[RMDB]
Chemical mapping of a 177-nucleotide RNA with DMS and 2A3. The RNA was probed in 150 mM KOAc, 10 mM MgCl2 and 150 mM bicine (pH 8.5) at 24 C. It was measured as part of the RMDB library OK2TRN. For 2A3, 881 sequencing reads were counted.
RNA sequence: GGGAACGACUCGAGUAGAGUCGAAAAUUGGGGCAACAACGAACCAUACAAGUACUGGCCGCAGAUGUCUACGAACGGUACUGCUCAUGGUCACCCACAUGAGAUAAUCUUGUACUAUUAUGAGCUGGCUUUUGACGUGUUUCGACACGUCAAAAGCAAAAGAAACAACAACAACAAC
Reactivity to DMS in 0.01 (KOAc 150mM, MgCl2 10mM, bicine 150mM(pH8.5), 24C), signal-to-noise 1, nucleotides 027 to 126: u020u000g000g070g000g050c120a030a050c130a110a090c160g010a010a100c020c000a030u020a050c170a090a030g000u000a040c060u000g000g050c190c000g000c050a000g010a200u020g020u000c000u010a010c100g000a040a050c080g030g010u000a000c020u000g010c020u040c030a000u000g000g030u000c090a080c030c050c040a150c020a000u000g000a010g010a110u000a030a090u000c070u000u000g010u000a030c110u000a120u000u000a020u010g000a060g010c120u000g000
Reactivity to 2A3 in 0.01 (KOAc 150mM, MgCl2 10mM, bicine 150mM(pH8.5), 24C), signal-to-noise 1, nucleotides 027 to 126: u050u020g010g030g010g000c050a040a020c010a060a000c120g120a050a030c030c040a020u020a050c060a020a000g000u010a000c040u020g010g000c040c040g110c020a030g050a150u190g100u210c030u090a060c000g050a070a000c030g000g040u010a060c010u030g040c020u030c000a000u010g000g020u110c060a170c020c030c030a010c010a000u010g000a020g000a070u160a070a100u080c070u080u090g040u040a040c010u050a060u260u020a120u090g000a010g120c080u140g060